[RMDB]
RNA sequence: GGGAACGACUCGAGUAGAGUCGAAAAGCUUUUUUUUCGGAUUAGACGUGGAGGCGAAAGUCACCCUCCUCGCAUCGCAAGUUCGUGCUUGCGACUUACACGUAGGGCGAGGGGUGGGCGAAAGUUGAAAACACGAUGUUGUUCGCAACAUCGUGAAUGUUAAUCUAGGCUUCGGCCUAGAUUAACAAAAAGAAACAACAACAACAAC
Reactivity to 2A3 in 0.01 (KOAc 150mM, MgCl2 10mM, bicine 150mM(pH8.5), 24C), signal-to-noise 1, nucleotides 027 to 156: g000c020u010u060u050u040u010u050u070u230c100g070g050a130u100u070a090g010a000c020g010u040g010g000a000g000g040c010g060a130a040a080g030u000c000a090c030c000c000u050c000c000u000c000g010c000a000u050c020g000c000a000a110g010u230u230c110g210u300g120c030u010u020g000c030g000a000c000u030u110a020c040a020c050g130u090a030g100g010g130c150g020a030g030g020g040g030u130g080g000g010c050g010a210a130a000g000u030u010g030a010a030a000a000c000a010c000g000a000u000g000u000u000g030u000u030c220g000c100a000a000c000a010u000c000g020u000g010a000a000
Structure probing data (2A3) for a 207-nucleotide construct.
The 2A3 profile rests on 579 reads.
The reactions ran in a buffer of 150 mM KOAc, 10 mM MgCl2 and 150 mM bicine (pH 8.5), at 24 C.
Reactivities are given for positions 27 through 156.